The record gives the reactivity of an RNA of 177 nucleotides to 2A3 and DMS. As a SHAPE reagent, 2A3 marks flexible, mostly unpaired nucleotides at the ribose 2'-OH. For DMS, 4,036 sequencing reads were counted. The RNA was probed in 150 mM KOAc, 10 mM MgCl2 and 150 mM bicine (pH 8.5) at 24 C. For 2A3, 1,731 sequencing reads were counted.
[RMDB]
RNA sequence: GGGAACGACUCGAGUAGAGUCGAAAAGGAUGUGGAUAGAGAAGGGUUAGUAAACGGUAGAAAACCCAUUUAUUGUAUGUCAUUGGCUGUUCGAGAUUAAGCAGCUGUAAUUCGAUGGCCAUACUCACAAGAGUAAAGCCUUCGGGCUUUACUCUUGAAAAGAAACAACAACAACAAC
Reactivity to 2A3 in 0.01 (KOAc 150mM, MgCl2 10mM, bicine 150mM(pH8.5), 24C), signal-to-noise 3, nucleotides 027 to 126: g070g000a030u070g010u010g100g000a050u100a040g070a020g020a050a200g000g040g010u070u040a030g000u080a040a040a170c150g000g050u080a060g110a070a160a020a030c020c000c000a010u050u090u050a090u030u080g040u030a040u040g020u030c060a050u040u130g010g000c030u030g050u150u140c070g010a050g020a260u050u110a130a020g000c060a030g000c030u040g050u060a010a070u040u090c000g000a000u020g000g000c000c060a010u010a020c030u020c020a030
Reactivity to DMS in 0.01 (KOAc 150mM, MgCl2 10mM, bicine 150mM(pH8.5), 24C), signal-to-noise 3, nucleotides 027 to 126: g020g010a050u000g010u020g000g000a050u010a040g020a040g000a110a060g010g000g000u020u030a050g030u020a040a100a130c120g020g040u000a110g000a090a070a090a070c060c000c010a150u020u030u030a070u020u000g000u000a050u010g020u000c020a120u000u010g020g000c000u000g000u030u020c030g000a050g010a050u010u010a030a090g000c060a040g030c100u050g000u020a010a020u020u010c020g000a020u010g000g000c030c000a010u000a080c030u010c050a190